[RMDB]
This 177-nucleotide RNA was probed chemically with DMS and 2A3. The DMS profile rests on 11,450 reads. The reactions ran in a buffer of 150 mM KOAc, 10 mM MgCl2 and 150 mM bicine (pH 8.5), at 24 C. 2A3 adducts were read by reverse transcription with SuperScript II with manganese. It was measured as part of the RMDB library OK2TST.
RNA sequence: GGGAACGACUCGAGUAGAGUCGAAAAUGGCGAUGAGCUCGGCUCCGCGCAGCGGCUGGCGGACCGCGGGCACCUUGCCGCCGCCGUCGGCGGUGAGCACCACGUUCUCGUCGAGCACGCCGAGCAAUCCUAAAAUAUCCUUCGGGAUAUUUUAGGAAAAAGAAACAACAACAACAAC
Reactivity to DMS in 0.01 (KOAc 150mM, MgCl2 10mM, bicine 150mM(pH8.5), 24C), signal-to-noise 8, nucleotides 027 to 126: u010g000g010c070g010a110u010g010a150g000c010u000c030g020g010c020u000c050c050g020c030g010c160a130g020c030g010g010c050u010g020g010c010g000g000a040c070c020g010c050g010g000g010c100a060c280c030u000u000g000c000c000g000c000c010g020c210c220g020u010c040g010g010c000g000g010u000g000a020g000c240a120c040c020a060c020g010u000u000c010u020c010g020u000c020g000a060g020c080a110c110g000c000c000g010a030g000c050a150a130
Reactivity to 2A3 in 0.01 (KOAc 150mM, MgCl2 10mM, bicine 150mM(pH8.5), 24C), signal-to-noise 4, nucleotides 027 to 126: u070g070g030c060g060a090u090g080a110g030c000u000c000g000g000c010u010c040c020g020c010g000c070a040g000c020g060g000c020u110g010g000c010g000g020a000c010c010g020c000g010g030g190c070a060c020c020u010u040g000c000c000g000c000c000g120c170c130g270u300c040g010g010c010g010g010u010g010a020g010c030a010c040c000a030c010g010u030u000c170u020c030g020u000c000g010a000g000c040a020c110g010c010c010g010a000g010c010a030a080